Chemical mapping of a 170-nucleotide RNA with 2A3 and DMS. Values cover nucleotides 27 to 129. The reactions ran in a buffer of 150 mM KOAc, 10 mM MgCl2 and 150 mM bicine (pH 8.5), at 24 C. Reactivities are rounded to 0.1 and cut off at 0 and 3.
RNA sequence: GGGAACGACUCGAGUAGAGUCGAAAAACUCGGCCCGGCUCAUUUCGGCAAAGGGCGGCGGUCCUUAGUUCUCUUACUCUUUUCUGUAAAGAGGAGACUGUAGGAUCCGCCGCCCAAGCCCGAACUGUAAGUACAUGGUUCGCCAUGUACAAAAGAAACAACAACAACAAC
Reactivity to 2A3 in 0.01 (KOAc 150mM, MgCl2 10mM, bicine 150mM(pH8.5), 24C), signal-to-noise 9, nucleotides 027 to 129: a000c050u050c030g070g000c000c000c000g080g010c040u030c050a060u010u030u010c010g000g000c020a090a110a230g030g000g000c000g000g000c000g000g010u010c000c000u020u010a040g040u280u050c010u000c000u050u180a180c010u020c000u050u060u110u100c170u290g300u300a010a020a010g000a000g020g000a000g000a000c000u070g050u070a000g000g010a020u030c010c030g000c000c000g000c000c000c000a000a000g000c010c010c000g000a010a010c020u030g020u130a140a030
Reactivity to DMS in 0.01 (KOAc 150mM, MgCl2 10mM, bicine 150mM(pH8.5), 24C), signal-to-noise 8, nucleotides 027 to 129: a090c060u020c040g020g010c000c000c000g060g000c110u030c030a060u000u050u010c000g010g040c060a080a170a160g040g010g030c050g010g010c000g000g010u020c000c000u050u000a000g010u040u040c000u030c030u050u090a300c050u030c010u010u020u040u090c220u080g070u070a000a000a010g030a020g010g000a010g030a040c020u050g000u060a000g000g000a020u060c010c000g040c000c000g010c030c000c000a010a020g000c130c020c000g020a040a020c070u000g000u040a050a060